[RMDB]
RNA sequence: GGGAACGACUCGAGUAGAGUCGAAAACAUGGACUCAGGCUUAUACCCAAAAACUGGUGCUCCUACUUGGUUCUAUGGAUGGUCAAAGCAAAGAGAAGGUGGAUUUAGCGAUUUUGGAAGCGAAAUCGAAUGGUGAACAUUUCGAUGUUCACCAUUCAAAAGAAACAACAACAACAAC
Reactivity to 2A3 in 0.01 (KOAc 150mM, MgCl2 10mM, bicine 150mM(pH8.5), 24C), signal-to-noise 6, nucleotides 027 to 126: c040a060u110g040g010a030c020u020c050a020g010g020c020u100u070a060u140a150c010c000c000a060a040a010a040a060c050u070g030g000u040g050c030u020c000c010u020a120c020u020u050g020g010u040u000c020u030a050u100g100g010a040u050g030g010u030c020a050a050a070g050c040a100a120a020g060a020g010a060a020g030g000u020g000g000a010u000u020u060a030g010c020g020a030u050u030u030u150g100g020a100a010g060c040g060a040a010a000u060c050
Reactivity to DMS in 0.01 (KOAc 150mM, MgCl2 10mM, bicine 150mM(pH8.5), 24C), signal-to-noise 5, nucleotides 027 to 126: c090a110u020g010g030a060c030u010c030a070g000g000c020u010u010a070u010a110c010c020c010a040a080a050a120a080c130u010g010g000u000g000c070u010c010c020u010a070c050u000u030g000g000u000u010c030u000a060u030g010g030a020u000g020g000u000c040a050a070a110g020c090a050a090a090g010a050g010a110a140g010g010u000g000g020a040u000u000u020a050g000c060g000a040u000u000u000u010g000g010a080a100g000c050g000a040a020a030u020c120
Chemical mapping of a 177-nucleotide RNA with 2A3 and DMS.
It was measured as part of the RMDB library OK1LIB.
The RNA was probed in 150 mM KOAc, 10 mM MgCl2 and 150 mM bicine (pH 8.5) at 24 C.
For DMS the reverse transcriptase was MarathonRT.
Reactivities are given for positions 27 through 126.